[RMDB]
RNA sequence: GGGAACGACUCGAGUAGAGUCGAAAAGCACCGCAUCGCGGAGUAUCCAAACACUAGUGACCCGUUGCGCGAAUGCGGGCAACGACUCAUCAUCGUUGGUGCCGAUGACGACGAUGUCCCCACGCUACGUGGGGUGAGGCUUCGGCCUCACCCCACGAAAAGAAACAACAACAACAAC
Reactivity to DMS in 0.01 (KOAc 150mM, MgCl2 10mM, bicine 150mM(pH8.5), 24C), signal-to-noise 1, nucleotides 027 to 126: g000c050a160c020c000g040c000a020u000c120g010c030g000g000a140g020u000a090u020c120c150a100a010a120c130a100c210u010a050g000u000g000a040c020c010c030g000u000u000g020c010g080c000g010a080a050u000g020c020g060g060g040c010a020a180c020g170a010c020u000c070a160u000c000a020u000c020g000u000u000g000g000u000g020c150c020g000a020u000g020a120c000g060a070c020g000a160u000g000u010c010c000c000c030a210c110g000c160u010a060
Reactivity to 2A3 in 0.01 (KOAc 150mM, MgCl2 10mM, bicine 150mM(pH8.5), 24C), signal-to-noise 2, nucleotides 027 to 126: g010c050a120c250c010g000c000a020u030c020g000c020g000g100a040g010u080a080u080c080c050a070a120a050c140a040c120u120a050g050u030g300a100c040c130c070g150u040u100g070c050g000c000g020a110a010u000g000c000g000g010g030c000a030a010c010g060a000c000u000c010a060u010c000a000u020c010g010u100u000g060g100u050g070c050c010g030a050u020g020a040c000g010a020c020g030a020u120g030u000c000c000c000c000a060c000g090c050u200a090